[RMDB]
RNA sequence: GGGAACGACUCGAGUAGAGUCGAAAACAAGUAGAAAAGCGAGUUUUGGAAUGGCUUGGGCAGCUAAGAUCAGACAUAGUAUCUGCAGAGCAACAUCUUUUCUUCAUCUCUUUGUUGGCAGAUCUAAGGUCCAUAGGCCGUAGAGACAUUGACGGUACCUAAAAAUACACUUCGGUGUAUUUUUAGGAAAAGAAACAACAACAACAAC
Reactivity to DMS in 0.01 (KOAc 150mM, MgCl2 10mM, bicine 150mM(pH8.5), 24C), signal-to-noise 2, nucleotides 027 to 156: c040a060a110g040u010a090g000a070a070a090a100g030c020g010a130g010u000u000u000u010g050g010a140a090u000g020g010c020u010u010g010g020g010c020a300g000c060u010a060a080g000a120u000c040a080g000a040c040a140u000a100g000u010a050u010c000u000g010c060a120g020a130g050c040a050a080c050a060u000c020u000u000u000u000c030u010u010c050a130u010c030u000c050u010u000u000g030u020u000g000g010c010a060g020a050u000c040u000a040a100g020g020u000c040c070a120u000a060g000g000c010c000g010u000a050g000a080g010a090c050a090u000u000g010a080c010g030g000u000a150
Reactivity to 2A3 in 0.01 (KOAc 150mM, MgCl2 10mM, bicine 150mM(pH8.5), 24C), signal-to-noise 3, nucleotides 027 to 156: c020a040a060g110u090a040g050a060a070a060a010g060c060g040a060g070u010u050u110u140g060g040a100a060u080g040g020c020u020u020g010g080g010c030a040g000c050u070a120a010g000a110u070c070a020g060a070c030a070u110a030g080u110a070u020c010u010g000c010a010g020a030g170c040a020a040c010a060u020c050u010u090u060u020c000u160u090c050a210u050c030u000c000u090u080u060g040u020u030g060g000c030a020g010a030u000c020u070a100a030g030g000u010c030c040a040u100a090g080g030c020c010g000u010a020g030a010g010a070c050a130u040u080g030a050c030g010g040u050a030
Conditions: 150 mM KOAc, 10 mM MgCl2 and 150 mM bicine (pH 8.5), 24 C. The record gives the reactivity of an RNA of 207 nucleotides to DMS and 2A3. The DMS profile rests on 4,947 reads. Reactivities are given for positions 27 through 156. Source: RMDB library OK3TST, as collected in RNAgym. DMS (dimethyl sulfate) methylates the pairing face of unpaired adenines and cytosines.